[RMDB]
RNA sequence: GGGAACGACUCGAGUAGAGUCGAAAAGCAACGCGGUGACGCGUUGCAACUCGACUGCUUCGGCAGUCGAGAAAACUUAAAGAGAAAAGAACUAAGUAACAUCGUACGCGAUGUUACACGAAUACGUUCGCGUAUUCGACGCAGAACUUCGGUUCUGCGAAGCGCUUGGCUACGGCCAAGCGCAACGAAGGCUACGGCCUUCGACAUUAACGUGAGUUAAUGAUGGGGUGCAAAUCCCCCCCUUUACUUGAGGGAAAUCAAGCCCAAGUUACUUAUUCGUAAGUAACAAAAGAAACAACAACAACAAC
Reactivity to DMS in 0.01 (KOAc 150mM, MgCl2 10mM, bicine 150mM(pH8.5), 24C), signal-to-noise 2, nucleotides 027 to 266: g010c000a000a010c020g010c000g030g030u000g000a130c000g020c000g030u010u000g040c000a020a060c000u010c000g010a030c000u020g030c000u010u000c140g000g000c000a000g010u000c000g000a010g040a060a030a130a170c120u040u030a030a040a190g000a170g040a160a120a150a080g000a140a110c110u030a090a100g000u010a000a000c000a000u000c010g030u010a090c230g050c020g040a010u000g000u000u000a000c010a140c040g000a010a000u000a010c000g040u020u020c130g020c020g000u010a010u010u000c000g010a300c070g020c010a010g000a000a020c000u000u030c130g020g010u000u000c010u010g010c020g020a040a080g000c000g050c000u030u000g000g010c010u010a070c270g020g000c030c050a000a000g030c000g020c010a000a060c020g000a010a010g000g020c000u000a070c250g040g000c010c000u000u000c000g030a130c000a010u010u010a000a000c000g000u020g010a260g030u000u000a000a020u000g000a200u000g000g010g000g020u000g000c140a060a140a120u000c000c000c000c010c010c010c010u000u010u030a300c020u000u000g000a000g000g010g000a010a070a020u030c040a030a040g020c140c150c090a070a090
Reactivity to 2A3 in 0.01 (KOAc 150mM, MgCl2 10mM, bicine 150mM(pH8.5), 24C), signal-to-noise 5, nucleotides 027 to 266: g010c000a000a000c000g010c000g010g070u090g100a040c010g000c000g000u010u000g000c000a000a000c000u000c000g000a000c000u010g020c000u040u040c140g150g000c020a000g000u000c000g010a000g000a000a020a000a000c040u140u150a080a150a010g210a030g070a080a110a090a020g110a120a050c160u260a300a040g020u010a000a000c000a000u010c010g030u030a020c270g010c010g140a000u000g000u000u010a000c020a010c000g000a010a000u000a000c000g020u070u100c250g010c000g100u000a010u000u000c020g060a040c010g000c000a000g000a010a000c000u080u190c270g140g000u000u010c000u000g000c000g010a060a020g000c000g000c000u000u010g010g010c000u020a080c300g130g000c000c010a000a000g000c010g000c010a000a000c010g000a000a000g000g000c000u010a010c270g110g000c000c000u000u000c000g010a000c000a000u010u000a010a000c030g050u060g160a150g040u060u000a020a000u010g080a090u080g000g000g000g010u030g020c010a020a000a060u010c010c020c000c000c000c000c000u090u190u220a050c010u010u010g010a010g000g000g010a010a020a010u060c010a010a010g030c030c060c010a060a000

An RNA of 307 nucleotides, treated with DMS and 2A3 and read out base by base. The 2A3 profile rests on 8,537 reads. Values cover nucleotides 27 to 266. DMS adducts were read by reverse transcription with MarathonRT. Conditions: 150 mM KOAc, 10 mM MgCl2 and 150 mM bicine (pH 8.5), 24 C.